RNA sequence: GGGAACGACUCGAGUAGAGUCGAAAAGAUGUCUUGGGCUUGAGAGCGAUACGCGCUCCCUUGUGCUCAUUAUUAUUCGCGUAAGGCACGACCCUGUAACAUCCCGGCUCGAGACGAAUCUGGUCGCUCUGUGUCGUGGUUUCGACCAUGACGCGGGAAAAGAAACAACAACAACAAC
Reactivity to DMS in 0.01 (KOAc 150mM, MgCl2 10mM, bicine 150mM(pH8.5), 24C), signal-to-noise 9, nucleotides 027 to 126: g000a030u010g010u000c030u010u000g010g000g010c070u010u020g010a070g010a040g010c020g010a200u030a080c190g010c030g010c050u000c010c030c020u010u020g010u010g010c010u000c100a080u020u020a050u020u030a080u020u020c110g010c090g010u010a050a060g000g000c050a050c040g000a090c040c020c020u010g000u010a080a060c090a080u000c010c040c020g000g000c010u000c010g000a090g000a040c030g000a080a070u010c050u010g000g010u000c030g010c050
Reactivity to 2A3 in 0.01 (KOAc 150mM, MgCl2 10mM, bicine 150mM(pH8.5), 24C), signal-to-noise 9, nucleotides 027 to 126: g020a010u060g010u010c020u040u030g010g000g000c010u060u090g050a030g000a010g070c030g060a060u080a180c120g020c000g010c070u010c010c000c010u030u070g040u040g010c020u010c130a020u020u110a060u060u050a070u040u150c080g000c020g040u040a020a040g030g000c020a010c060g100a120c010c000c010u030g030u040a030a010c000a030u010c000c000c000g000g000c000u010c010g030a020g000a010c020g010a010a050u020c020u030g030g000u030c010g000c020
The record gives the reactivity of an RNA of 177 nucleotides to DMS and 2A3. For DMS, 135,431 sequencing reads were counted. High DMS reactivity at an A or C suggests that its Watson-Crick edge is free. It was measured as part of the RMDB library OK1LIB. For 2A3, 130,319 sequencing reads were counted.